Description:
An RNA of 177 nucleotides, treated with DMS and 2A3 and read out base by base. The reactions ran in a buffer of 150 mM KOAc, 10 mM MgCl2 and 150 mM bicine (pH 8.5), at 24 C. For DMS, 2,285 sequencing reads were counted. 2A3 adducts were read by reverse transcription with SuperScript II with manganese. For 2A3, 2,126 sequencing reads were counted. DMS (dimethyl sulfate) methylates the pairing face of unpaired adenines and cytosines.

RNA sequence: GGGAACGACUCGAGUAGAGUCGAAAAGAUGGACAAUGCUGCCAGUGACCUGCUGGCACAGGGAACCAGCUCUCUCUAUAGCGACGAGGAGUCCAUCCUCUCCCGCUUCGAUGAGGAGGACUUGGGAACACUAAGCCUGGUUCGCCAGGCUUAGUGUAAAAGAAACAACAACAACAAC
Reactivity to DMS in 0.01 (KOAc 150mM, MgCl2 10mM, bicine 150mM(pH8.5), 24C), signal-to-noise 3, nucleotides 027 to 126: g010a050u000g020g000a050c040a140a080u010g010c160u000g010c010c030a010g000u000g000a160c210c150u020g010c020u000g000g020c020a040c020a110g000g010g010a170a100c020c030a030g020c040u000c020u000c020u000c040u010a070u020a070g010c070g020a080c190g020a030g010g000a120g010u010c040c020a080u000c000c010u000c050u000c060c060c050g010c060u000u010c160g010a090u010g010a110g000g000a030g000g010a020c070u000u000g000g000g000a090
Reactivity to 2A3 in 0.01 (KOAc 150mM, MgCl2 10mM, bicine 150mM(pH8.5), 24C), signal-to-noise 2, nucleotides 027 to 126: g000a020u040g050g000a000c020a120a100u090g040c080u020g010c090c020a030g050u040g140a300c010c090u130g000c000u020g010g010c000a000c000a010g030g010g020a050a040c010c010a000g020c010u010c000u000c000u000c010u060a110u090a230g070c040g100a110c030g020a040g060g020a010g030u000c000c020a090u000c000c000u000c000u060c000c030c000g030c010u010u070c080g220a230u240g020a060g050g040a000g040g010a020c000u040u130g020g020g050a030